[RMDB]
RNA sequence: GGGAACGACUCGAGUAGAGUCGAAAAGAUGUUUUAAGUAAGUUAUACACUUAUUUGAGUCAAGGCACUGUGAAUAGUGAUAGUGCAUCCACAAUUAGACUUGAGCAUGUGAGGUCUGCUAUAAAAGGGGUAUAUUCCACUGACAGGAAGAAUGUGGGUUGCCUGCAAAUUUCGAUUUGCAGGCAACAAAAGAAACAACAACAACAAC
Reactivity to 2A3 in 0.01 (KOAc 150mM, MgCl2 10mM, bicine 150mM(pH8.5), 24C), signal-to-noise 1, nucleotides 027 to 156: g080a050u170g040u070u110u120u160a000a040g000u000a020a000g000u020u140a220u040a160c070a040c060u040u060a040u060u020u100g030a000g060u070c050a050a030g010g050c020a010c050u070g000u040g140a070a200u070a120g150u100g050a050u030a060g040u050g220c010a120u120c060c010a040c050a010a100u140u140a140g030a020c000u020u100g010a000g070c000a060u110g000u080g010a000g000g000u000c010u000g020c010u100a040u110a120a040a070a000g020g040g000g050u140a110u050a010u110u030c030c020a000c040u030g030a020c000a020g020g070a070a000g080a020a020u220g000u030g010g000

Chemical mapping of a 207-nucleotide RNA with 2A3. The reactions ran in a buffer of 150 mM KOAc, 10 mM MgCl2 and 150 mM bicine (pH 8.5), at 24 C. Values cover nucleotides 27 to 156.